RNA sequence: GGGAACGACUCGAGUAGAGUCGAAAAGAUGGGAACGACUCGAGUAGAGUCGAAAUUAAGAAUCGGAAGCAUGAGAACCGAGACAGGCAUGCAAUCGCGAACUAGAGGAGAAACUCCUCUAGAAAUAAGUACGUAUAUACUUCGGUAUAUACGUACUAAAAGAAACAACAACAACAAC
Reactivity to DMS in 0.01 (KOAc 150mM, MgCl2 10mM, bicine 150mM(pH8.5), 24C), signal-to-noise 6, nucleotides 027 to 126: g030a110u040g000g000g020a070a130c010g000a000c020u000c000g000a140g020u020a130g000a020g010u000c000g000a020a040a080u050u020a100a090g020a120a110u010c020g000g000a140a160g030c030a020u010g030a130g030a080a120c020c020g000a110g000a100c150a090g000g010c020a010u040g000c030a050a110u000c090g010c100g030a060a160c000u000a000g010a010g000g000a010g000a150a100a110c140u000c000c000u000c000u010a010g000a040a060a050u050a060
Reactivity to 2A3 in 0.01 (KOAc 150mM, MgCl2 10mM, bicine 150mM(pH8.5), 24C), signal-to-noise 6, nucleotides 027 to 126: g050a010u230g000g020g040a010a060c000g000a000c000u000c010g010a050g140u160a010g040a000g000u010c000g000a000a000a000u220u090a120a040g070a060a060u040c010g000g010a040a000g010c020a010u040g020a030g050a110a060c040c030g040a030g070a080c040a020g000g030c010a000u030g010c010a040a100u070c040g020c020g110a030a020c000u000a000g000a000g030g000a010g050a080a160a100c160u010c010c000u000c000u000a000g010a010a050a010u190a030

The data come from the RNA Mapping Database (RMDB), library OK1LIB. An RNA of 177 nucleotides, treated with DMS and 2A3 and read out base by base. 2A3 adducts were read by reverse transcription with SuperScript II with manganese.